[RMDB]
RNA sequence: GGGAACGACUCGAGUAGAGUCGAAAAGGCCGCCGGUAUCGGAUCGAGGCUGACGGGUAUGCCUGCCGAUCUCAUGAUCAUUGAUGACCCGUUCAAGAACAUGAUGGAAGCCGACAGCGCGCUGUACAUGUGGGUAUCACUUCGGUGAUACCCACAUAAAAGAAACAACAACAACAAC
Reactivity to DMS in 0.01 (KOAc 150mM, MgCl2 10mM, bicine 150mM(pH8.5), 24C), signal-to-noise 2, nucleotides 027 to 126: g020g020c000c020g010c030c000g010g000u000a050u020c010g000g000a120u000c090g010a110g020g020c030u010g000a150c070g010g010g000u000a070u010g020c040c030u010g000c070c060g000a050u010c070u020c090a070u000g010a090u000c050a090u000u000g040a030u010g000a200c030c030c000g030u000u000c070a020a060g020a080a050c030a040u000g010a070u000g020g000a150a270g020c000c010g000a050c030a140g020c000g000c110g000c050u010g000u010a120c170
Reactivity to 2A3 in 0.01 (KOAc 150mM, MgCl2 10mM, bicine 150mM(pH8.5), 24C), signal-to-noise 1, nucleotides 027 to 126: g010g040c050c000g000c020c010g020g000u020a040u020c040g000g030a030u080c130g110a040g040g000c000u010g050a020c000g030g000g060u110a060u150g030c050c000u050g000c010c030g040a030u000c080u010c060a100u120g060a040u100c040a120u040u030g110a080u080g030a090c000c000c060g040u060u070c070a100a000g030a080a060c010a010u040g000a020u110g080g050a080a070g000c020c030g040a070c110a130g000c010g000c000g020c020u060g070u150a040c000
Structure probing data (DMS and 2A3) for a 177-nucleotide construct. 2A3 adducts were read by reverse transcription with SuperScript II with manganese. Conditions: 150 mM KOAc, 10 mM MgCl2 and 150 mM bicine (pH 8.5), 24 C.